The record gives the reactivity of an RNA of 177 nucleotides to DMS and 2A3. Conditions: 150 mM KOAc, 10 mM MgCl2 and 150 mM bicine (pH 8.5), 24 C. 2A3 adducts were read by reverse transcription with SuperScript II with manganese.
[RMDB]
RNA sequence: GGGAACGACUCGAGUAGAGUCGAAAAUUCUUUUACAGUGUCUGAGCUUGACCAAAAGAAGUUUGGGAACCGGAAAAGUUGGUAAAACCUUUUAGAGUACUAAACCUAGAAACGCAUCGACAGCAAGAGAAUAUAGGGUAUUCGUACCCUAUAUUCUAAAAGAAACAACAACAACAAC
Reactivity to DMS in 0.01 (KOAc 150mM, MgCl2 10mM, bicine 150mM(pH8.5), 24C), signal-to-noise 5, nucleotides 027 to 126: u010u010c010u010u000u010u010a150c110a080g010u000g000u020c020u020g010a110g020c040u000u000g000a160c070c070a080a080a110a130g000a080a080g010u000u000u000g020g010g000a080a080c170c050g010g000a040a030a030a080g010u000u000g000g010u010a080a070a080a080c030c020u000u010u010u000a090g010a100g010u010a120c040u000a040a040a050c020c070u020a100g010a070a070a060c120g010c030a050u020c080g010a050c060a070g030c100a070a120g010
Reactivity to 2A3 in 0.01 (KOAc 150mM, MgCl2 10mM, bicine 150mM(pH8.5), 24C), signal-to-noise 2, nucleotides 027 to 126: u010u010c000u010u110u020u060a050c030a040g050u010g050u070c030u120g030a030g030c040u060u110g040a080c030c000a030a130a020a060g110a070a040g050u060u070u050g030g010g000a070a060c040c010g040g050a040a060a030a020g060u110u070g010g030u070a040a080a030a070c000c030u040u050u030u050a070g020a040g020u020a040c030u060a060a050a020c010c000u040a030g100a080a080a000c060g000c020a090u060c020g020a030c020a030g140c010a110a000g070